RNA sequence: GGGAACGACUCGAGUAGAGUCGAAAAUUGAGAAGGGCUGUCCCUAGUACGAGAGGACCGGGACGGACGAACCUCUGGUGUGCCAGUUGUCCUGCCAAGGGCAUGGCUGGUUGGCUACGUUCGGAAAUCUAUUGGAAUUGUUCGCAAUUCCAAUAGAAAAAGAAACAACAACAACAAC
Reactivity to DMS in 0.01 (KOAc 150mM, MgCl2 10mM, bicine 150mM(pH8.5), 24C), signal-to-noise 9, nucleotides 027 to 126: u010u010g000a090g010a080a070g010g000g010c040u000g000u000c000c000c000u000a060g010u000a130c020g000a250g000a230g000g010a100c300c190g000g000g010a020c010g010g000a100c010g010a020a030c010c000u000c010u000g000g010u000g010u000g000c010c000a010g010u000u000g010u000c000c000u000g010c240c300a100a030g010g020g000c010a040u020g010g000c000u000g000g010u000u000g000g000c010u000a020c110g000u000u000c010g000g000a080a090a100
Reactivity to 2A3 in 0.01 (KOAc 150mM, MgCl2 10mM, bicine 150mM(pH8.5), 24C), signal-to-noise 2, nucleotides 027 to 126: u120u160g060a070g040a090a080g080g040g040c010u020g010u020c000c000c000u000a010g000u010a010c020g020a010g000a040g130g000a000c010c000g000g000g000a000c020g010g010a010c010g000a010a000c000c010u000c010u010g010g030u130g050u100g050c010c010a010g000u040u020g020u030c010c000u040g150c060c050a090a040g010g000g000c030a040u080g110g000c000u000g030g000u040u120g140g000c000u020a020c150g010u010u020c010g000g030a040a110a030
Background
Chemical mapping of a 177-nucleotide RNA with DMS and 2A3. 2A3 adducts were read by reverse transcription with SuperScript II with manganese.